[RMDB]
RNA sequence: GGGAACGACUCGAGUAGAGUCGAAAAUGCGAUCGUCUUUCCGUUGCUGCUGGUCAUCGCGGUCUCACUGCUGCUAGUUUCAGCGGUACAACGUUGCGCGCGGUACUGCACGCAGCGAUUUGCGGACGCGCGGACACAUGCAGCUGUUGAGGAACAGCCUGUAUAUGACGUUCGCGUCAUAUACAGGAAAAGAAACAACAACAACAAC
Reactivity to 2A3 in 0.01 (KOAc 150mM, MgCl2 10mM, bicine 150mM(pH8.5), 24C), signal-to-noise 3, nucleotides 027 to 156: u140g020c050g070a150u070c060g110u020c030u020u030u020c010c030g110u080u190g000c030u010g000c000u020g010g000u010c060a100u140c060g010c010g040g060u020c020u010c010a020c030u010g000c000u010g000c060u100a120g090u150u090u170c040a010g010c020g000g000u020a030c020a070a030c010g010u010u010g030c000g020c000g000c010g120g140u190a190c060u190g000c000a010c010g000c000a010g010c000g040a090u050u010u140g050c090g010g000a020c050g000c000g000c010g270g000a030c080a010c000a110u250g000c000a010g010c000u000g000u000u030g010a010g000g100a020a020c000a000g020
Reactivity to DMS in 0.01 (KOAc 150mM, MgCl2 10mM, bicine 150mM(pH8.5), 24C), signal-to-noise 2, nucleotides 027 to 156: u020g010c020g010a010u000c040g020u020c050u010u010u000c010c010g010u000u020g000c010u000g000c020u010g010g010u010c040a070u010c020g000c020g040g010u060c020u000c070a090c050u000g010c000u000g010c080u000a170g020u000u000u000c060a070g000c030g030g030u000a080c030a050a100c030g040u010u000g000c030g060c000g020c030g030g020u000a110c130u000g060c000a030c020g020c000a020g020c030g010a060u010u000u010g020c070g020g000a130c040g030c020g050c060g040g020a050c010a090c040a110u030g010c050a070g020c000u000g000u000u010g000a130g000g000a050a050c010a140g010